[RMDB]
RNA sequence: GGGAACGACUCGAGUAGAGUCGAAAAUAGAAAGGCUAAGCACCUCGCAAUGACGUAAGGUGGGACUUUUCCUUCUGGAACCAAGCGGUUGGUUCCGAGGGGGGAGUGAUCCAGGUACCGCCGUAGAAACUGGAUUACGACGUCUACCCGGGAUUCAGAUUUCAUUAAUCUUCGGAUUAAUGAAAUCAAAAGAAACAACAACAACAAC
Reactivity to DMS in 0.01 (KOAc 150mM, MgCl2 10mM, bicine 150mM(pH8.5), 24C), signal-to-noise 2, nucleotides 027 to 156: u010a060g010a050a050a030g010g010c010u020a040a100g000c050a030c020c150u010c060g000c090a100a160u000g010a160c110g020u010a030a080g020g040u000g020g020g000a100c020u000u010u000u000c000c010u010u000c030u010g070g000a010a030c010c010a020a110g000c250g010g010u010u010g000g000u000u010c000c010g000a060g040g010g000g000g030g010a060g010u000g030a080u000c020c030a050g010g000u000a100c070c040g030c020c120g010u000a090g010a110a090a250c040u000g010g010a140u000u000a170c000g000a050c030g000u000c040u000a040c040c010c020g020g000g010a180u020u000c080a210
Reactivity to 2A3 in 0.01 (KOAc 150mM, MgCl2 10mM, bicine 150mM(pH8.5), 24C), signal-to-noise 5, nucleotides 027 to 156: u190a010g010a010a010a000g010g000c020u010a000a020g020c000a020c000c030u100c060g040c070a110a260u150g050a100c040g040u060a040a040g010g010u020g010g020g010a030c010u040u030u020u020c000c000u020u030c150u230g000g000a000a000c000c000a030a000g170c080g220g170u070u040g000g000u010u000c000c000g010a010g000g000g000g000g010g000a030g010u030g020a020u010c010c000a000g030g000u040a060c020c060g100c070c040g020u030a020g070a050a200a020c010u010g000g000a010u020u030a020c040g000a010c030g120u020c010u010a020c000c000c010g030g000g020a070u120u070c040a060
This 207-nucleotide RNA was probed chemically with DMS and 2A3. For DMS the reverse transcriptase was MarathonRT. For DMS, 5,929 sequencing reads were counted. The RNA was probed in 150 mM KOAc, 10 mM MgCl2 and 150 mM bicine (pH 8.5) at 24 C. High 2A3 reactivity points to a flexible backbone, as in loops and unpaired stretches.